[RMDB]
RNA sequence: GGGAACGACUCGAGUAGAGUCGAAAACUAACGGGUAACAUGCAUUAUUCCUCUGAUCGCGUUGCUAUUACCCGACCAUAUGUGGUCAGAGGCGACGAGCAGCGAUCGCUGGCGAUACCGACUGAGACCUACCCCGUUGCUUCGGCAACGGGGUAGGAAAAGAAACAACAACAACAAC
Reactivity to 2A3 in 0.01 (KOAc 150mM, MgCl2 10mM, bicine 150mM(pH8.5), 24C), signal-to-noise 2, nucleotides 027 to 126: c020u100a020a080c050g000g000g000u020a070a110c020a160u090g000c000a000u020u000a190u300u300c000c000u000c020u000g000a000u000c000g060c000g300u300u160g000c000u030a000u030u050a060c000c010c060g000a020c040c000a040u200a150u300g070u170g080g000u050c040a060g020a020g020g020c030g000a000c000g000a000g050c000a000g000c020g050a120u060c060g000c020u010g000g000c060g100a110u020a060c030c030g020a000c000u000g050a010g050a030
Chemical mapping of a 177-nucleotide RNA with 2A3.